Conditions: 150 mM KOAc, 10 mM MgCl2 and 150 mM bicine (pH 8.5), 24 C. This 177-nucleotide RNA was probed chemically with DMS and 2A3. Reactivities are given for positions 27 through 126.

RNA sequence: GGGAACGACUCGAGUAGAGUCGAAAAAGCAAUAUUUAAGCAAUUAGAUUUAGAACAUUUGGCACUAGAACGUCAAAUUGACUUAGAUGGUCAUACAUUAUCUGGCGGAGAAAUUCAGCGUUUAGCGGGCUUCAUAGACAUUCGUGUCUAUGAAGCCAAAAGAAACAACAACAACAAC
Reactivity to DMS in 0.01 (KOAc 150mM, MgCl2 10mM, bicine 150mM(pH8.5), 24C), signal-to-noise 1, nucleotides 027 to 126: a040g040c060a050a000u060a030u000u010u000a150a060g000c070a030a040u000u000a060g000a090u060u030u000a150g000a120a080c140a090u010u000u010g000g030c000a080c080u000a150g020a070a170c180g000u000c040a000a090a020u000u040g040a090c000u000u000a070g000a080u000g030g070u000c210a090u030a070c240a030u000u000a030u010c020u010g000g030c010g000g010a010g070a150a040a120u000u000c030a060g000c070g000u000u000u030a030g000c080g000
Reactivity to 2A3 in 0.01 (KOAc 150mM, MgCl2 10mM, bicine 150mM(pH8.5), 24C), signal-to-noise 3, nucleotides 027 to 126: a000g180c090a090a020u120a120u180u110u120a150a040g010c030a030a040u100u010a110g090a090u130u100u020a040g000a140a020c000a050u120u000u000g070g000c020a040c050u090a110g030a300a000c070g020u000c040a000a020a030u050u050g070a110c000u000u080a030g030a230u210g030g010u010c020a010u020a140c020a030u070u090a050u200c060u050g010g000c000g010g030a050g080a050a100a000u130u070c050a030g030c020g030u060u050u100a020g090c090g000
Background:
2A3 is a SHAPE reagent: it acylates the 2'-hydroxyl of flexible nucleotides of all four kinds.